[RMDB]
RNA sequence: GGGAACGACUCGAGUAGAGUCGAAAAUCGUGGAGCUUAGCGACGCAAAUGACGAAACGAGCGUAAGCAAAACGAGCACGAUGUAACAGGCGGCCUCUACCAUCCACAUGCGCCAGGAAAUACGCUCUGAAUCGGAAUGUUUCGACAUUCCGAUUCAAAAAGAAACAACAACAACAAC
Reactivity to DMS in 0.01 (KOAc 150mM, MgCl2 10mM, bicine 150mM(pH8.5), 24C), signal-to-noise 2, nucleotides 027 to 126: u000c000g080u010g010g000a300g030c040u000u000a120g020c020g000a060c010g020c020a090a220a090u000g040a090c200g000a030a070a140c010g010a170g000c050g020u000a030a060g010c010a030a060a150a060c020g000a090g000c040a030c020g010a040u000g030u000a090a040c180a070g000g000c020g000g030c020c000u000c070u000a030c050c000a040u000c020c060a030c100a030u000g010c070g020c020c020a040g010g000a050a050a100u000a080c090g010c000u000c090
Reactivity to 2A3 in 0.01 (KOAc 150mM, MgCl2 10mM, bicine 150mM(pH8.5), 24C), signal-to-noise 1, nucleotides 027 to 126: u010c030g010u020g020g030a030g000c000u040u000a010g040c050g090a050c020g030c010a100a080a220u170g040a120c110g120a130a100a000c040g000a010g080c000g000u060a070a000g010c000a000a070a010a040c020g000a000g000c010a030c070g030a040u070g000u180a160a050c050a100g020g060c000g000g010c050c000u000c000u000a060c030c000a000u020c000c000a050c010a010u060g060c000g000c000c000a000g030g020a010a100a010u160a020c030g000c030u000c020
Chemical mapping of a 177-nucleotide RNA with DMS and 2A3. The reactions ran in a buffer of 150 mM KOAc, 10 mM MgCl2 and 150 mM bicine (pH 8.5), at 24 C. 2A3 adducts were read by reverse transcription with SuperScript II with manganese. The DMS profile rests on 1,149 reads. The data come from the RNA Mapping Database (RMDB), library OK2TST.